[RMDB]
Structure probing data (2A3) for a 207-nucleotide construct. 2A3 adducts were read by reverse transcription with SuperScript II with manganese. The reactions ran in a buffer of 150 mM KOAc, 10 mM MgCl2 and 150 mM bicine (pH 8.5), at 24 C.
RNA sequence: GGGAACGACUCGAGUAGAGUCGAAAACUUCGACUCGGACCGGCUCAUCUCGACAAGAGGCGGCAGUCCUCAGUGCUCUUACUCUUUUCUGUAAAGAGGAGACUGCUGGACCCGCCGCCCAAGUUCGAGCAUGAGCCACAGUUCCGAGCGAAGGGACCUACGGAUUUAGCUUCGGCUAAAUCCGUAGAAAAGAAACAACAACAACAAC
Reactivity to 2A3 in 0.01 (KOAc 150mM, MgCl2 10mM, bicine 150mM(pH8.5), 24C), signal-to-noise 1, nucleotides 027 to 156: c010u000u000c000g160a150c000u000c000g000g000a040c000c100g000g000c020u000c000a000u000c000u000c000g030a010c050a080a120g230a160g080g000c000g000g060c000a010g000u010c000c000u040c010a070g030u200g210c010u000c000u050u300a300c010u030c020u090u050u160u070c150u300g300u300a000a060a000g020a050g000g010a000g000a000c010u020g050c070u010g010g000a000c020c070c070g000c020c000g000c010c010c000a020a000g040u070u040c020g010a000g040c050a000u020g000a000g000c000c000a000c010a000g000u060u030c000c000g010a000g000c010g000a010a020g000g000g000a010c000